RNA sequence: GGGAACGACUCGAGUAGAGUCGAAAAGGACAUCACCAGCGAGAGUUGGUCAGAAUGUUGCACAUUACACUGAUGUUGAAGAUGUCAGAAACAUCGUUCUGAAUGGAAAGCAACAGGUAAUGAGGUACCCACCAUCACUGUUCGCAGUGAUGGUGGGAAAAGAAACAACAACAACAAC
Reactivity to DMS in 0.01 (KOAc 150mM, MgCl2 10mM, bicine 150mM(pH8.5), 24C), signal-to-noise 1, nucleotides 027 to 126: g060g010a000c010a010u010c000a180c000c000a030g000c000g000a220g000a160g060u000u000g000g010u030c110a040g000a050a090u000g020u000u000g010c030a170c030a000u000u000a010c010a170c040u000g010a220u020g020u000u000g010a200a190g020a070u000g030u000c020a020g040a080a040a120c110a040u000c230g000u020u000c020u000g000a030a060u010g000g010a300a070a070g020c000a030a030c000a000g030g000u000a030a010u000g000a140g000g030u000a100
Reactivity to 2A3 in 0.01 (KOAc 150mM, MgCl2 10mM, bicine 150mM(pH8.5), 24C), signal-to-noise 1, nucleotides 027 to 126: g000g000a000c000a010u030c010a000c020c000a010g000c000g000a050g010a010g050u020u010g000g070u020c040a060g130a100a240u010g030u020u040g010c030a020c020a030u000u100a020c280a040c010u030g010a100u010g020u070u080g060a160a020g130a130u160g080u120c060a010g020a000a030a030c080a150u280c170g030u110u030c010u020g100a030a020u130g020g060a040a000a000g030c000a010a060c000a000g000g040u040a060a000u040g060a030g120g000u070a110